Structure probing data (2A3 and DMS) for a 177-nucleotide construct. For DMS, 3,345 sequencing reads were counted. High 2A3 reactivity points to a flexible backbone, as in loops and unpaired stretches. It was measured as part of the RMDB library OK2TRN. For 2A3 the reverse transcriptase was SuperScript II with manganese. The 2A3 profile rests on 4,019 reads. The RNA was probed in 150 mM KOAc, 10 mM MgCl2 and 150 mM bicine (pH 8.5) at 24 C.

[RMDB]
RNA sequence: GGGAACGACUCGAGUAGAGUCGAAAAUGAGUACUCACAUGCGGAUCUGGUACGCUAGGAUCCACCAUGAGUGUAUAGCUAGAGGUACGUGGAUCGAUCCACUAGUAUGGUACGUGUACUGUGAUCCCCGCAUUAAGGAGUUCGCUCCUUAAUGCGGAAAAGAAACAACAACAACAAC
Reactivity to 2A3 in 0.01 (KOAc 150mM, MgCl2 10mM, bicine 150mM(pH8.5), 24C), signal-to-noise 4, nucleotides 027 to 126: u140g030a030g070u060a060c030u050c030a050c010a070u110g070c100g030g010a010u030c010u030g030g010u020a010c010g000c020u030a030g250g000a000u030c010c010a000c000c010a140u220g070a020g110u150g060u100a140u110a160g060c010u040a020g020a040g170g120u180a040c040g040u040g000g010a030u030c010g040a110u030c010c010a020c040u020a040g040u090a100u090g020g000u050a030c040g000u010g000u020a010c000u030g060u100g200a020u010c010c010
Reactivity to DMS in 0.01 (KOAc 150mM, MgCl2 10mM, bicine 150mM(pH8.5), 24C), signal-to-noise 4, nucleotides 027 to 126: u000g010a100g010u000a040c050u010c050a110c170a050u000g010c190g020g000a020u000c010u010g000g000u000a020c030g020c020u000a160g000g010a020u000c010c000a000c030c110a140u020g000a100g020u000g000u020a050u000a160g020c040u000a020g010a100g020g020u000a050c140g020u000g000g000a010u000c020g040a160u010c020c010a030c060u000a080g010u000a150u010g000g010u010a100c160g010u000g000u020a020c020u010g000u010g000a050u000c020c030